Chemical mapping of a 207-nucleotide RNA with DMS and 2A3. DMS adducts were read by reverse transcription with MarathonRT. The RNA was probed in 150 mM KOAc, 10 mM MgCl2 and 150 mM bicine (pH 8.5) at 24 C. The DMS profile rests on 3,202 reads.
RNA sequence: GGGAACGACUCGAGUAGAGUCGAAAACGUACGUGGAGACACGUACGACGUGACUUCGGUCACGAAUAGAGGCAACUCCUGCGCCUCUCGCGCGAGGCGUCGGUGGUCGGCGAGCCCACGGACGCAAAAACUCGCGCGAAGAUAACUAGCAGGAGAACUACUGCACUGAGUUCGCUCAGUGCAGUAGAAAAGAAACAACAACAACAAC
Reactivity to DMS in 0.01 (KOAc 150mM, MgCl2 10mM, bicine 150mM(pH8.5), 24C), signal-to-noise 2, nucleotides 027 to 156: c010g050u000a020c000g070u010g030g010a300g000a300c000a000c020g070u000a000c000g020a070c020g010u000g030a020c000u010u010c260g060g000u000c000a000c000g020a060a090u020a180g000a050g010g020c040a140a150c010u000c000c000u010g010c030g010c040c010u000c000u000c000g060c000g040c020g010a050g010g000c010g040u000c060g000g030u000g000g000u000c050g020g000c150g000a300g000c290c000c000a060c040g010g000a020c040g000c100a030a030a080a090a300c010u010c000g020c030g030c010g000a000a070g010a070u020a070a060c140u000a140g060c010a030g000g020a030g010a030a060
Reactivity to 2A3 in 0.01 (KOAc 150mM, MgCl2 10mM, bicine 150mM(pH8.5), 24C), signal-to-noise 5, nucleotides 027 to 156: c000g000u000a000c000g000u000g000g030a050g010a040c000a000c010g000u000a000c000g000a020c000g010u010g000a000c010u030u040c270g130g000u000c010a000c000g000a020a070u190a080g010a010g010g000c030a110a300c100u010c000c000u000g000c000g000c010c000u010c030u020c010g000c000g000c000g000a010g000g020c010g030u010c100g110g000u000g010g000u010c050g020g180c210g010a030g020c000c000c000a000c020g120g000a000c010g000c050a000a020a060a090a140c000u000c010g000c000g000c000g000a000a000g010a010u140a100a090c150u070a070g000c010a000g000g000a000g000a000a000